[RMDB]
This 177-nucleotide RNA was probed chemically with DMS and 2A3. It was measured as part of the RMDB library OK2TST.

RNA sequence: GGGAACGACUCGAGUAGAGUCGAAAACAGAGCGGGCCGCCUACGGCACCGAUUGGGUCCUGAAGAAGAUGCCACUGGCCCUGCGCUGGGAUGAGGCUACCGACACCUACAGCUUGAACGAGCUGGACUUGAAAUGCUAGUUCGCUAGCAUUUCAAGAAAAGAAACAACAACAACAAC
Reactivity to DMS in 0.01 (KOAc 150mM, MgCl2 10mM, bicine 150mM(pH8.5), 24C), signal-to-noise 4, nucleotides 027 to 126: c070a040g010a080g000c020g020g000g020c050c070g010c130c120u000a110c150g000g000c020a040c010c010g000a150u010u000g010g000g020u010c020c050u000g020a090a110g000a090a090g020a060u000g000c020c020a130c130u000g000g000c020c010c030u000g000c050g010c050u010g000g000g010a060u000g010a080g010g010c020u000a070c040c020g000a070c100a070c030c030u000a070c020a010g020c010u010u000g010a090a110c300g000a040g010c010u000g000g000a170
Reactivity to 2A3 in 0.01 (KOAc 150mM, MgCl2 10mM, bicine 150mM(pH8.5), 24C), signal-to-noise 3, nucleotides 027 to 126: c020a000g040a010g040c000g000g020g010c040c050g020c070c080u110a080c030g030g010c060a030c020c020g010a040u090u150g100g000g000u020c050c060u100g020a060a030g060a020a020g040a060u080g050c000c020a060c060u060g030g000c000c000c000u050g000c030g000c030u040g000g030g000a010u100g050a020g010g000c010u050a050c030c020g000a010c020a040c030c010u060a060c000a000g000c010u060u050g120a160a050c100g000a040g020c010u000g020g020a010

The reactions ran in a buffer of 150 mM KOAc, 10 mM MgCl2 and 150 mM bicine (pH 8.5), at 24 C.